The record gives the reactivity of an RNA of 207 nucleotides to 2A3 and DMS. Reactivities are given for positions 27 through 156.
RNA sequence: GGGAACGACUCGAGUAGAGUCGAAAAUAAUGCAUUUGUGUCUCAGACUCUAACCAGACAAGCAGAGGUUAGGGCUAGUAGACAACUUGCCAAAGACAAGGUUAAUGAAUGUGUUAGGUCUCAGUCUCAGAGAUUCGGAUUCUGUGGUAAUGGUACAUAAUUUCGAAGUGUUCGCACUUCGAAAUUAAAAAGAAACAACAACAACAAC
Reactivity to 2A3 in 0.01 (KOAc 150mM, MgCl2 10mM, bicine 150mM(pH8.5), 24C), signal-to-noise 4, nucleotides 027 to 156: u080a000a030u050g000c000a000u010u020u040g110u030g010u020c010u000c010a080g030a300c010u000c000u010a010a000c010c000a060g140a240c120a210a090g060c080a110g100a050g090g000u000u000a000g000g000g030c000u040a030g080u050a010g020a000c000a010a010c020u000u010g040c030c020a090a110a030g050a060c010a010a030g010g070u140u160a100a010u280g040a020a020u020g010u000g010u080u040a010g000g050u060c020u010c060a050g070u030c010u000c090a010g020a020g000a090u120u080c040g000g010a050u100u000c040u060g030u060g010g050u060a070a070u100g010g020u040a020c010a030
Reactivity to DMS in 0.01 (KOAc 150mM, MgCl2 10mM, bicine 150mM(pH8.5), 24C), signal-to-noise 3, nucleotides 027 to 156: u000a080a070u000g000c020a010u000u000u000g040u000g020u010c020u010c070a300g020a030c010u000c010u000a030a040c010c030a300g010a300c060a120a140g030c160a190g000a170g010g030u000u000a020g010g010g000c000u010a090g060u030a010g010a030c000a040a100c000u000u000g030c000c020a160a140a170g020a060c020a040a020g000g000u000u000a160a120u020g000a040a020u010g010u010g010u000u000a040g030g000u000c030u010c030a080g030u010c050u010c080a190g020a110g020a080u000u000c060g020g000a130u000u000c060u010g000u010g010g020u020a040a090u000g010g010u010a080c050a160